[RMDB]
The record gives the reactivity of an RNA of 207 nucleotides to DMS and 2A3. Source: RMDB library OK3TST, as collected in RNAgym. Reactivities are given for positions 27 through 156. The reactions ran in a buffer of 150 mM KOAc, 10 mM MgCl2 and 150 mM bicine (pH 8.5), at 24 C. The 2A3 profile rests on 1,692 reads.
RNA sequence: GGGAACGACUCGAGUAGAGUCGAAAAGUCAGCGUGCGCAACGAAGUGACGAAGCGCAUGGACACCUGGCGUGAGAAAGAGAUUGAAGGCUGGGAGCCGACCCGGAAAGACUGGGCGCAGCUGAAAGACGAUGUCGAAGCUGAAAUGCUGAAAACCGCACUCUCAUCAUUUUCGAAUGAUGAGAGUGAAAAGAAACAACAACAACAAC
Reactivity to DMS in 0.01 (KOAc 150mM, MgCl2 10mM, bicine 150mM(pH8.5), 24C), signal-to-noise 2, nucleotides 027 to 156: g060u000c000a040g030c030g090u010g000c030g040c000a040a300c030g010a160a200g040u000g010a200c060g000a100a300g080c000g030c000a040u000g000g000a070c020a180c030c000u010g040g030c000g040u000g020a120g000a100a080a150g000a090g050a180u000u010g000a180a130g000g000c030u010g000g030g010a130g000c040c020g030a090c060c000c000g030g000a130a070a150g000a190c010u020g050g000g040c010g040c000a060g020c010u010g000a080a040a160g030a100c060g000a150u010g030u000c070g010a140a130g010c020u020g000a110a020a090u010g000c000u060g010a080a050a050a090c000c060g020
Reactivity to 2A3 in 0.01 (KOAc 150mM, MgCl2 10mM, bicine 150mM(pH8.5), 24C), signal-to-noise 3, nucleotides 027 to 156: g020u010c020a010g030c010g020u020g000c000g010c000a010a060c040g090a180a090g110u120g120a100c040g020a030a010g020c000g000c010a000u000g000g030a020c010a050c100c000u010g010g000c020g020u080g000a060g060a010a060a000g040a020g000a090u060u100g070a110a030g110g000c000u010g000g030g020a010g000c000c000g110a170c000c040c000g010g030a120a120a030g070a050c070u050g010g010g020c030g000c000a020g000c020u010g010a050a060a010g050a030c080g060a050u170g020u090c020g020a020a010g000c000u000g020a060a060a030u120g000c030u020g010a030a030a020a040c020c010g020